[RMDB]
RNA sequence: GGGAACGACUCGAGUAGAGUCGAAAACUUGAGAAAGAAAUUGCUGGCCAAGAUGAGGACCACUUCAUUACAGUGGACGCUGUGGGUUGCUUCGAGGGUGAUGAAGAAGAGGAAGAGGAUGAUGAGGACUUGAACAGACCUUCGGGUCUGUUCAAGUAAAAGAAACAACAACAACAAC
Reactivity to DMS in 0.01 (KOAc 150mM, MgCl2 10mM, bicine 150mM(pH8.5), 24C), signal-to-noise 2, nucleotides 027 to 126: c050u000u000g010a130g040a160a090a060g010a040a010a150u000u010g000c020u000g020g040c040c050a080a130g000a060u010g020a070g000g000a120c060c090a050c020u000u020c120a050u050u020a060c150a050g000u010g060g000a160c150g080c040u010g020u000g000g020g020u000u000g010c110u020u000c040g000a110g010g000g030u020g000a050u000g000a030a050g000a130a050g000a090g030g010a040a040g010a090g000g020a070u000g010a070u000g000a000g000g010
Reactivity to 2A3 in 0.01 (KOAc 150mM, MgCl2 10mM, bicine 150mM(pH8.5), 24C), signal-to-noise 2, nucleotides 027 to 126: c000u020u120g030a030g070a020a150a010g120a010a090a050u070u000g020c000u050g060g000c040c000a070a010g050a050u150g010a070g000g120a120c000c000a050c030u070u060c060a190u030u180a070c070a000g030u020g050g030a010c040g000c060u030g010u030g170g000g000u050u020g000c060u070u070c030g030a100g000g050g000u090g050a090u120g000a010a010g020a040a010g000a010g000g000a010a000g020a030g000g050a050u030g010a030u020g000a050g010g040